[RMDB]
Chemical mapping of a 177-nucleotide RNA with DMS and 2A3. The reactions ran in a buffer of 150 mM KOAc, 10 mM MgCl2 and 150 mM bicine (pH 8.5), at 24 C. For 2A3 the reverse transcriptase was SuperScript II with manganese. DMS adducts were read by reverse transcription with MarathonRT.
RNA sequence: GGGAACGACUCGAGUAGAGUCGAAAAACAUCACUACGGUGAUGAGUAUGUGCAGCUGAUGACAGCAUCGCUGCUGAGACUCGAUGAUGGCUCAGCCUUAAAGUAAACGCUCUGAUGCACAUCACAAAGUGUCCCCUAGUUUCGACUAGGGGACACUAAAAGAAACAACAACAACAAC
Reactivity to DMS in 0.01 (KOAc 150mM, MgCl2 10mM, bicine 150mM(pH8.5), 24C), signal-to-noise 2, nucleotides 027 to 126: a120c010a000u000c000a000c010u000a140c190g030g010u000g000a000u000g010a120g030u030a030u000g000u000g000c010a030g000c000u000g000a100u020g020a020c110a090g000c030a050u000c060g010c120u010g000c030u000g000a120g000a110c010u000c010g030a060u000g030a040u000g000g000c000u000c000a010g010c150c130u040u000a120a090a050g000u040a000a100a150c110g000c070u000c010u010g000a160u000g000c010a000c010a030u000c060a050c200a040a080
Reactivity to 2A3 in 0.01 (KOAc 150mM, MgCl2 10mM, bicine 150mM(pH8.5), 24C), signal-to-noise 4, nucleotides 027 to 126: a020c000a010u000c000a000c020u040a060c250g090g030u000g000a000u000g010a030g010u120a030u090g070u040g000c000a000g010c040u050g000a040u090g020a120c030a050g050c030a080u040c090g000c090u010g010c050u070g060a050g000a080c030u020c110g090a140u130g030a050u130g020g000c010u000c000a010g030c000c000u050u240a100a080a010g030u080a100a110a020c090g040c040u020c030u060g010a020u050g000c020a030c000a070u050c020a010c090a080a120